RNA sequence: GGGAACGACUCGAGUAGAGUCGAAAAAGAACUAGCGAUUGUAAAAGGCUGUUUGCGCUAAGAUAUGGAAUUAGCGCAAAUAGGUCCGAAUUCCUUGAUAACAUUUCGGACAAGCGCGCUAAAACAACACAAAGUACUAGUUCGCUAGUACUUUGUGAAAAGAAACAACAACAACAAC
Reactivity to DMS in 0.01 (KOAc 150mM, MgCl2 10mM, bicine 150mM(pH8.5), 24C), signal-to-noise 6, nucleotides 027 to 126: a090g010a110a120c130u000a050g010c010g010a080u000u000g020u010a060a080a140a120g000g010c010u000g010u000u000u000g000c010g010c010u000a000a010g010a110u010a240u020g010g000a070a140u000u000a000g000c000g000c000a000a000a010u000a020g010g000u000c000c000g000a020a020u000u000c080c090u010u010g020a100u010a080a100c230a080u000u010u000c000g010g000a020c000a070a290g000c080g000c010g010c030u000a040a070a080a060c130a070a120
Reactivity to 2A3 in 0.01 (KOAc 150mM, MgCl2 10mM, bicine 150mM(pH8.5), 24C), signal-to-noise 5, nucleotides 027 to 126: a000g050a030a020c020u010a020g020c000g060a070u070u280g060u150a050a080a080a040g120g030c000u010g010u010u000u010g010c010g000c010u000a010a000g050a130u200a150u300g120g050a060a100u020u000a010g000c000g000c000a000a000a000u000a000g010g010u010c000c000g000a000a010u070u040c030c000u060u120g060a040u060a130a040c030a120u030u060u030c000g000g020a000c020a040a030g070c080g000c000g000c030u050a130a090a010a020c050a050a010
Structure probing data (DMS and 2A3) for a 177-nucleotide construct. Conditions: 150 mM KOAc, 10 mM MgCl2 and 150 mM bicine (pH 8.5), 24 C. The DMS profile rests on 7,802 reads. The data come from the RNA Mapping Database (RMDB), library M2PK90.